[RMDB]
RNA sequence: GGGAACGACUCGAGUAGAGUCGAAAAAUCUCGGGCAGUUUACACGUAAAGUGAACCAGCCUGGUUAUCCGACGCUGAGCAGAUGUUCGUGGUAAGUACAUAGCUACUUAGCUUGCCUUAUAAUCUGUAUGAUUUUCGUUUUCGGACGGAGAUCAUAAAAAGAAACAACAACAACAAC
Reactivity to 2A3 in 0.01 (KOAc 150mM, MgCl2 10mM, bicine 150mM(pH8.5), 24C), signal-to-noise 9, nucleotides 027 to 126: a000u030c070u040c000g000g000g000c010a020g000u020u050u100a040c050a020c070g150u180a090a110a130g010u010g010a010a010c010c010a020g000c000c000u010g000g020u040u050a070u040c020c010g030a040c060g030c080u070g050a020g010c020a010g010a070u050g050u140u210c060g030u060g040g040u030a030a020g000u010a030c040a120u170a100g040c050u050a060c050u110u050a030g040c000u030u060g020c010c000u120u120a170u040a120a090u030c020u040g050
Reactivity to DMS in 0.01 (KOAc 150mM, MgCl2 10mM, bicine 150mM(pH8.5), 24C), signal-to-noise 9, nucleotides 027 to 126: a050u000c030u010c030g010g010g010c020a230g010u000u000u000a050c010a080c190g020u010a100a110a130g010u000g010a040a030c030c040a120g010c010c020u000g000g000u000u000a090u000c040c010g010a080c100g010c060u000g000a120g010c040a050g000a050u000g000u000u000c080g010u000g010g010u000a010a030g010u000a040c060a140u010a110g010c080u000a060c090u000u000a040g010c020u000u000g010c080c020u000u000a070u010a080a070u000c050u000g010
Conditions: 150 mM KOAc, 10 mM MgCl2 and 150 mM bicine (pH 8.5), 24 C. An RNA of 177 nucleotides, treated with 2A3 and DMS and read out base by base. For 2A3, 74,801 sequencing reads were counted. High 2A3 reactivity points to a flexible backbone, as in loops and unpaired stretches.